[RMDB]
The data come from the RNA Mapping Database (RMDB), library OK2TRN. The record gives the reactivity of an RNA of 177 nucleotides to DMS and 2A3. The reactions ran in a buffer of 150 mM KOAc, 10 mM MgCl2 and 150 mM bicine (pH 8.5), at 24 C. The 2A3 profile rests on 19,131 reads. For DMS, 25,198 sequencing reads were counted.
RNA sequence: GGGAACGACUCGAGUAGAGUCGAAAAGUGUUAAUGACCGCGUCCACGGGAUCUGCGGAGGCGACCCCGGCCCCGACGGUCAACGACAUUGCCACGGCGCCUACACCGGCGCUCAAUGCGGUCAACGAACUAGCUGUUAAUUCGUUAACAGCUAGUUAAAAGAAACAACAACAACAAC
Reactivity to DMS in 0.01 (KOAc 150mM, MgCl2 10mM, bicine 150mM(pH8.5), 24C), signal-to-noise 9, nucleotides 027 to 126: g020u000g010u000u010a090a190u010g000a020c000c000g020c040g000u010c050c090a150c110g010g010g000a020u000c010u000g040c020g000g010a110g020g010c020g010a180c020c010c010c020g000g000c020c010c010c010g010a070c040g000g010u000c010a040a090c150g010a080c100a100u010u000g010c140c050a070c150g000g000c000g010c000c010u000a110c290a130c300c180g000g000c010g000c000u000c090a030a070u000g020c010g000g000u000c030a070a160c210g000
Reactivity to 2A3 in 0.01 (KOAc 150mM, MgCl2 10mM, bicine 150mM(pH8.5), 24C), signal-to-noise 7, nucleotides 027 to 126: g070u040g030u120u100a130a090u080g000a010c000c000g000c020g040u020c040c060a080c050g040g040g010a030u010c040u130g000c020g040g140a210g120g000c010g030a090c000c000c000c000g020g000c000c010c000c000g060a090c010g020g010u020c010a040a040c040g050a010c020a090u060u180g050c040c020a040c020g020g000c000g010c010c010u140a120c100a090c130c090g000g010c000g000c010u030c010a020a020u090g000c000g000g020u020c020a040a020c040g030